[RMDB]
RNA sequence: GGGAACGACUCGAGUAGAGUCGAAAACUGUAAUCCCAGUGCUUUGAAAGGCCAAGGUGGGAAGAUCACUUGAGGCAAGGAGUUUGAGACCAGCCUGGGCAACAUAGUGAGACUCCAUCUGUACAGGUGUCUCUGUAUCAUUCGUGAUACAGAGACAAAAAGAAACAACAACAACAAC
Reactivity to 2A3 in 0.01 (KOAc 150mM, MgCl2 10mM, bicine 150mM(pH8.5), 24C), signal-to-noise 1, nucleotides 027 to 126: c010u000g030u090a010a100u040c020c000c030a020g070u100g030c020u110u090u200g160a130a090a010g000g010c000c020a040a030g000g010u030g010g050g000a100a090g020a030u010c000a000c010u040u050g030a030g090g050c000a050a060g000g040a110g040u070u210u300g110a130g040a020c000c020a000g050c000c010u060g000g120g050c010a080a010c020a040u120a020g040u020g020a030g010a000c000u000c020c010a030u020c030u060g080u060a030c010a020g000g090
Reactivity to DMS in 0.01 (KOAc 150mM, MgCl2 10mM, bicine 150mM(pH8.5), 24C), signal-to-noise 4, nucleotides 027 to 126: c060u010g010u000a110a140u000c010c000c010a120g010u010g000c020u000u010u000g020a110a160a110g000g010c020c050a100a080g010g020u000g000g010g000a070a060g010a300u000c020a020c010u000u000g000a100g010g020c030a090a020g000g010a080g010u000u000u000g010a160g000a070c060c040a100g010c010c000u000g010g000g010c040a040a090c090a070u010a030g030u000g020a030g000a100c030u000c010c010a020u000c030u000g000u000a060c100a050g000g000